[RMDB]
RNA sequence: GGGAACGACUCGAGUAGAGUCGAAAACCGCGCUCAGUUGUUUCUUCUUGUUCUCGAGGGCCUUCCUUCUUCGGUGAUCCUUCCUCUCCCUGUCGGUGAAGUCUCCCGCACGAGUCCUCUUCCUAGGUAAGAGUCAUCUUCGGAUGACUCAAAAGAAACAACAACAACAAC
Reactivity to DMS in 0.01 (KOAc 150mM, MgCl2 10mM, bicine 150mM(pH8.5), 24C), signal-to-noise 4, nucleotides 027 to 129: c060c000g020c180g000c090u070c130a150g030u060u000g000u010u000u000c010u050u000c000u040u040g020u020u000c050u000c060g040a120g030g020g020c030c000u000u000c020c020u000u000c030u000u000c070g030g020u020g000a120u000c000c000u060u040c020c030u040c000u020c020c000c010u020g000u030c010g020g010u020g020a120a160g000u000c000u060c030c020c040g000c070a100c050g020a060g020u000c050c020u020c050u020u000c010c020u030a020g030g030u000a090a120
Reactivity to 2A3 in 0.01 (KOAc 150mM, MgCl2 10mM, bicine 150mM(pH8.5), 24C), signal-to-noise 6, nucleotides 027 to 129: c000c000g060c050g030c040u190c130a050g010u010u010g020u000u040u000c000u040u020c030u060u090g050u080u020c030u030c040g030a090g010g030g030c010c010u060u040c000c000u050u060c020u040u030c010g050g020u080g040a040u030c000c000u040u080c000c000u000c000u000c000c010c010u030g070u070c030g050g000u050g040a040a020g050u000c020u010c030c010c010g020c000a030c030g010a000g010u000c000c000u000c000u000u000c010c010u010a050g040g040u070a140a060
Structure probing data (DMS and 2A3) for a 170-nucleotide construct. Conditions: 150 mM KOAc, 10 mM MgCl2 and 150 mM bicine (pH 8.5), 24 C. The DMS profile rests on 23,272 reads. Reactivities are rounded to 0.1 and cut off at 0 and 3. It was measured as part of the RMDB library 15KLIB.